Chemical mapping of a 177-nucleotide RNA with DMS and 2A3. The RNA was probed in 150 mM KOAc, 10 mM MgCl2 and 150 mM bicine (pH 8.5) at 24 C. The 2A3 profile rests on 2,416 reads.
RNA sequence: GGGAACGACUCGAGUAGAGUCGAAAAGGACACUCAUGUCAUACUCUUCAUCUGAAUGUAUUGACUACACGGAAACUGAAUAACCUAGCAUAAUAUAAAAAACGAGGUAUCUUGGAUACCAAGACACAUGUCCACCUAAGUUCGCUUAGGUGGACAUAAAAGAAACAACAACAACAAC
Reactivity to DMS in 0.01 (KOAc 150mM, MgCl2 10mM, bicine 150mM(pH8.5), 24C), signal-to-noise 2, nucleotides 027 to 126: g000g010a150c040a070c070u000c010a060u020g010u000c000a070u000a010c040u000c040u000u020c040a070u040c180u000g000a120a010u020g000u000a010u010u020g020a050c000u000a070c220a080c150g010g000a020a220a080c010u000g000a080a060u050a110a130c000c050u010a120g000c060a080u000a040a100u010a100u070a000a060a020a090a010a180c110g000a260g000g020u000a000u000c000u010u000g010g020a030u000a000c000c010a020a110g000a080c130a060c230
Reactivity to 2A3 in 0.01 (KOAc 150mM, MgCl2 10mM, bicine 150mM(pH8.5), 24C), signal-to-noise 5, nucleotides 027 to 126: g040g000a000c010a010c050u100c030a110u080g040u040c000a000u020a040c010u060c020u120u100c080a300u100c090u190g030a090a020u040g010u060a020u010u190g040a020c020u080a030c060a010c050g130g020a060a230a090c040u050g020a070a130u080a140a040c020c060u060a020g020c020a050u150a200a040u130a150u260a150a140a020a000a010a010c120g030a090g000g000u000a000u030c100u120u180g120g030a020u020a050c020c020a020a020g050a000c040a000c010